This 177-nucleotide RNA was probed chemically with DMS and 2A3.
For DMS the reverse transcriptase was MarathonRT.
It was measured as part of the RMDB library OK2TST.
Values are in units of 0.01, from 0 to 300, in steps of 10.

RNA sequence: GGGAACGACUCGAGUAGAGUCGAAAACAGCAACGCUCUGUUGGAAUUCCGCUGCGAUUCUGCAGAGGCGAGGGCCGAUGCGCUGCAGGCGGAGGCAGCCGAAGCUGCCAACAGGCACGCGCAGGAACCCAAAUAGUAGCUUCGGCUACUAUUUGGGAAAAGAAACAACAACAACAAC
Reactivity to DMS in 0.01 (KOAc 150mM, MgCl2 10mM, bicine 150mM(pH8.5), 24C), signal-to-noise 2, nucleotides 027 to 126: c060a120g020c060a170a190c100g020c040u000c020u010g000u010u010g020g000a200a110u010u020c010c050g000c070u000g010c050g000a150u010u000c120u000g010c010a010g010a300g010g000c020g010a160g000g000g000c030c010g010a170u010g000c020g000c120u010g020c010a040g010g020c060g000g000a140g000g000c010a030g010c000c080g000a030a060g010c010u010g010c010c000a000a060c010a020g010g010c060a110c140g000c110g000c070a090g000g000a110a160
Reactivity to 2A3 in 0.01 (KOAc 150mM, MgCl2 10mM, bicine 150mM(pH8.5), 24C), signal-to-noise 3, nucleotides 027 to 126: c070a000g020c030a000a080c100g000c010u060c000u140g050u060u060g040g020a110a120u120u010c010c030g000c090u080g000c030g210a230u130u050c030u190g000c000a000g000a040g020g000c020g030a240g060g140g030c000c000g040a010u040g010c060g000c030u060g000c040a090g170g040c000g020g020a020g010g020c020a000g010c020c050g060a080a000g020c030u040g070c010c000a010a020c020a010g020g040c010a000c030g060c020g030c030a050g080g160a100a110